[RMDB]
RNA sequence: GGGAACGACUCGAGUAGAGUCGAAAAACGAGGAUUUUUCGUUCAUAUACCUAACAAGAAAGCCGAUAGUGCGCCGCUAUAUUCGCGCACUAUCGACAUCAGACAGGGGUUAAUUCGGGGUUGAGAAUCGGAGGACAAUUUUCGAAUUGUCCUCCGAAAAAGAAACAACAACAACAAC
Reactivity to 2A3 in 0.01 (KOAc 150mM, MgCl2 10mM, bicine 150mM(pH8.5), 24C), signal-to-noise 1, nucleotides 027 to 126: a040c100g010a020g070g000a050u160u000u000u000u000c000g000u020u060c030a000u190a000u040a170c000c030u010a270a110c080a110a090g020a170a010a000g040c000c000g000a000u000a000g000u000g000c000g000c010c080g140c100u080a010u160a120u300u300c080g000c000g000c000a000c000u000a000u000c000g000a000c000a010u000c000a000g080a150c060a010g010g060g060g030u060u090a060a000u110u170c000g000g000g000g010u050u140g040a000g010a070a010
Reactivity to DMS in 0.01 (KOAc 150mM, MgCl2 10mM, bicine 150mM(pH8.5), 24C), signal-to-noise 1, nucleotides 027 to 126: a000c030g000a000g000g000a090u000u000u010u050u000c030g000u000u070c100a130u060a180u000a040c000c000u120a190a090c230a020a080g000a030a050a180g070c000c000g050a000u000a000g000u000g000c010g000c000c300g120c300u020a240u030a250u000u000c300g050c000g000c000a000c000u000a010u000c000g000a000c030a030u070c040a010g000a130c270a070g000g000g050g030u050u000a010a150u000u010c030g000g000g030g000u030u050g020a090g040a100a130